[RMDB]
RNA sequence: GGGAACGACUCGAGUAGAGUCGAAAAGAUAUGGAGAAGCACUCGCCUCACCGUUGAUCAAUCAGUUAGUUCGGAAACGAACUAACUGAUUGGGAGGUGAGGAACUACGAGCGCUUCUCCUAAGUCACAAGGGUGACUAGUUCGCUAGUCACCCUUGAAAAGAAACAACAACAACAAC
Reactivity to DMS in 0.01 (KOAc 150mM, MgCl2 10mM, bicine 150mM(pH8.5), 24C), signal-to-noise 2, nucleotides 027 to 126: g010a040u010a300u010g000g000a030g020a010a010g000c010a010c010u000c000g040c010c000u000c000a000c010c000g010u010u000g030a040u020c000a010a000u010c000a000g010u000u000a000g010u000u020c000g000g000a130a120a300c000g000a020a000c010u000a000a010c000u000g010a000u000u000g000g000g010a030g010g040u000g010a010g020g000a010a010c160u010a300c020g010a000g040c050g020c000u000u000c000u010c000c000u000a000a040g010u000c030a270
About this RNA: Structure probing data (DMS) for a 177-nucleotide construct. The reactions ran in a buffer of 150 mM KOAc, 10 mM MgCl2 and 150 mM bicine (pH 8.5), at 24 C. It was measured as part of the RMDB library TTRINS.